[RMDB]
RNA sequence: GGGAACGACUCGAGUAGAGUCGAAAAUUCGCGGUGUGCCCGUGCGACCUUGGUCUUGGCUUUGCGGCGGUUGUUCGAGCCCUUCUGCUUGCGGGCCAUUUGCCGCUGGUAGCGGGCGAGGUUGCGGAUGUAGGUACUCAUUCGUGAGUACCUACAUAAAAGAAACAACAACAACAAC
Reactivity to 2A3 in 0.01 (KOAc 150mM, MgCl2 10mM, bicine 150mM(pH8.5), 24C), signal-to-noise 7, nucleotides 027 to 126: u070u040c020g000c020g060g010u090g050u130g090c000c000c010g010u030g010c050g070a040c000c010u030u080g140g030u090c020u040u050g130g020c010u050u070u300g050c010g000g000c000g020g020u030u040g050u080u150c060g030a060g020c030c020c000u070u080c060u110g070c020u070u140g040c040g000g000g000c000c010a030u040u040u150g020c000c010g020c080u030g070g060u040a020g010c000g000g000g010c000g000a000g000g040u030u030g000c010g010g000
Reactivity to DMS in 0.01 (KOAc 150mM, MgCl2 10mM, bicine 150mM(pH8.5), 24C), signal-to-noise 5, nucleotides 027 to 126: u010u010c050g010c050g010g020u010g000u020g000c010c010c020g020u010g010c090g010a020c010c000u010u000g010g010u010c100u010u000g010g020c010u000u010u030g020c010g010g010c000g000g020u010u010g010u020u010c100g010a100g010c050c130c050u010u020c080u020g020c080u000u020g020c220g000g000g010c010c010a040u010u000u010g010c000c000g010c060u000g010g020u020a100g010c190g000g000g010c010g000a020g000g010u000u010g000c000g000g000